Chemical mapping of a 207-nucleotide RNA with 2A3 and DMS. For DMS, 4,289 sequencing reads were counted. Conditions: 150 mM KOAc, 10 mM MgCl2 and 150 mM bicine (pH 8.5), 24 C.
RNA sequence: GGGAACGACUCGAGUAGAGUCGAAAAACGGUCAUAUACGUAUGACCGAAUGAGCAUAACAGGGCCACCCCAAAGCGUUCACAUUGUGGCCCCUGUCAGGUUCUGGUAAAUCUGCGAGUUCUGCUAAAUUAGGUAACUCUCUUCGGAGAGUUACCAACAAGGAUAGAUUCUUCGGAAUCUAUCCUUGAAAAGAAACAACAACAACAAC
Reactivity to 2A3 in 0.01 (KOAc 150mM, MgCl2 10mM, bicine 150mM(pH8.5), 24C), signal-to-noise 4, nucleotides 027 to 156: a000c000g000g000u000c000a000u010a000u020a030c190g060u020a010u010g000a000c000c000g030a010a100u070g010a010g010c030a040u060a130a050c000a020g000g000g010c000c000a020c010c020c020c050a090a170a010g100c080g130u240u180c080a090c050a200u090u130g000u000g030g010c010c000c000c010u040g050u060c040a030g020g020u050u000c020u180g010g070u060a050a040a050u020c030u030g020c040g030a060g060u050u040c050u040g010c010u050a070a180a150u200u140a100g000g000u000a000a000c000u000c010u000c000u070u050c140g030g000a000g000a000g000u000u000a000c010c000a000a000
Reactivity to DMS in 0.01 (KOAc 150mM, MgCl2 10mM, bicine 150mM(pH8.5), 24C), signal-to-noise 2, nucleotides 027 to 156: a110c010g010g000u000c000a010u000a070u000a060c290g040u000a030u000g020a030c000c000g000a030a020u000g010a070g050c010a110u000a020a020c040a040g000g040g020c010c030a030c020c010c010c030a050a080a140g000c000g000u000u000c090a080c060a170u010u000g000u000g010g030c120c020c010c020u010g000u000c040a060g030g020u000u020c030u000g000g010u000a040a050a050u000c030u000g000c030g010a160g010u000u000c120u000g010c030u000a040a080a170u010u000a110g000g020u000a010a010c000u000c010u000c000u000u010c300g040g020a000g020a020g010u000u000a000c020c000a000a020
For DMS the reverse transcriptase was MarathonRT.